An RNA of 177 nucleotides, treated with DMS and 2A3 and read out base by base. The reactions ran in a buffer of 150 mM KOAc, 10 mM MgCl2 and 150 mM bicine (pH 8.5), at 24 C. Values are in units of 0.01, from 0 to 300, in steps of 10. For DMS the reverse transcriptase was MarathonRT.
[RMDB]
RNA sequence: GGGAACGACUCGAGUAGAGUCGAAAAUCUUAUAUGUUCGCAUAUAAGAAAAGGCGGAGUAGUGUUGGGACGCGAAAGGCCAUAAAUUAACAAUCACUCAGAUACAGACCUGGUUCGCCAGGUCUAAGCCUUGUAUAAAUUUCGAUUUAUACAAGGCAAAAGAAACAACAACAACAAC
Reactivity to DMS in 0.01 (KOAc 150mM, MgCl2 10mM, bicine 150mM(pH8.5), 24C), signal-to-noise 3, nucleotides 027 to 126: u000c000u020u000a010u010a000u000g000u000u030c180g010c010a010u000a010u000a010a010g010a010a050a140a100g010g030c040g000g020a060g000u010a100g000u000g000u000u000g030g020g010a180c040g000c020g010a130a080a190g000g000c010c000a040u010a050a050a110u020u010a080a100c130a090a070u010c080a070c050u000c100a080g010a110u010a070c190a040g020a010c000c000u000g000g000u000u000c210g000c000c010a000g000g010u000c000u000a010a080
Reactivity to 2A3 in 0.01 (KOAc 150mM, MgCl2 10mM, bicine 150mM(pH8.5), 24C), signal-to-noise 1, nucleotides 027 to 126: u010c000u020u000a000u000a010u040g010u010u030c020g020c030a000u000a000u010a010a020g040a050a110a010a010g010g000c000g030g000a010g010u010a000g000u000g070u130u140g160g020g010a010c010g020c010g030a020a010a010g050g010c030c000a010u070a000a060a020u090u060a050a000c020a040a030u140c020a030c220u230c050a030g060a110u100a140c050a000g000a010c000c000u020g000g000u000u030c080g000c030c010a000g030g050u000c000u000a000a000